[RMDB]
Structure probing data (2A3 and DMS) for a 177-nucleotide construct. For 2A3 the reverse transcriptase was SuperScript II with manganese. It was measured as part of the RMDB library TTRINS. For 2A3, 8,207 sequencing reads were counted.
RNA sequence: GGGAACGACUCGAGUAGAGUCGAAAAGAUAUGGAGAUCUCGAUUCACAUGGGUAGUAGAACUACAGACUGUCUCGGAAACGAGACUGUCUGCUACUACCCAUGUGACAGGAUUGAUCUCCUAAGUCGAUAGUAUGCUAGUUCGCUAGCAUACUAUCAAAAGAAACAACAACAACAAC
Reactivity to 2A3 in 0.01 (KOAc 150mM, MgCl2 10mM, bicine 150mM(pH8.5), 24C), signal-to-noise 3, nucleotides 027 to 126: g040a040u180a060u230g000g000a010g010a010u010c040u030c070g170a250u180u020c020a000c000a000u030g020g000g030u000a020g000u020a000g010a180a110c230u280a080c300a010g000a000c020u040g000u000c000u000c000g060g000a110a120a060c010g000a010g000a000c000u000g000u000c000u000g000c000u010a000c000u030a000c000c000c000a010u010g000u000g000a000c030a000g060g000a110u100u240g000a000u000c000u030c000c000u030a130a050g090u050c120
Reactivity to DMS in 0.01 (KOAc 150mM, MgCl2 10mM, bicine 150mM(pH8.5), 24C), signal-to-noise 9, nucleotides 027 to 126: g000a100u010a300u010g010g000a020g010a010u000c000u000c070g000a300u010u000c000a010c010a010u000g000g000g030u000a000g000u000a010g000a080a040c120u020a300c020a000g000a010c010u000g000u000c000u000c000g010g010a140a100a220c000g000a010g010a010c000u000g000u000c000u000g000c010u000a000c000u000a000c000c000c000a000u000g000u000g000a010c300a070g000g000a130u010u000g000a010u000c000u000c000c000u000a020a080g010u020c110